[RMDB]
RNA sequence: GGGAACGACUCGAGUAGAGUCGAAAAAUGCUGUACAGUGAAGCCCGGAUUCUGUGUGUGCUGCGUUUGCUGAUUUGCCAUACACAUAAAUAUACGUAGCACCACAUGAUUCGGCUUCGUGGUGCUACAUUGCUUUAUGAUUCGUCAUAAAGCAAUGAAAAGAAACAACAACAACAAC
Reactivity to DMS in 0.01 (KOAc 150mM, MgCl2 10mM, bicine 150mM(pH8.5), 24C), signal-to-noise 9, nucleotides 027 to 126: a060u010g010c060u000g010u000a040c040a120g010u010g010a030a020g010c110c040c030g020g000a030u000u000c170u000g020u000g010u020g020u000g010c020u000g010c010g010u000u000u010g010c160u010g010a140u010u010u010g010c090c130a090u020a110c150a090c100a060u020a040a080a110u020a080u010a040c030g020u000a000g000c000a010c000c000a000c000a010u000g000a030u000u000c020g010g000c010u000u000c020g010u010g000g020u000g000c010u000a110
Reactivity to 2A3 in 0.01 (KOAc 150mM, MgCl2 10mM, bicine 150mM(pH8.5), 24C), signal-to-noise 9, nucleotides 027 to 126: a000u150g010c050u050g020u070a030c020a060g050u030g110a010a000g020c050c050c010g000g010a020u050u020c010u010g010u000g040u020g000u000g040c010u000g000c010g030u030u080u090g090c100u070g110a280u090u090u180g100c070c030a080u150a170c070a020c020a070u200a090a130a010u200a020u020a030c010g000u010a000g000c000a000c000c000a000c000a000u030g000a000u010u010c010g000g000c000u000u000c000g000u010g020g020u030g000c000u020a040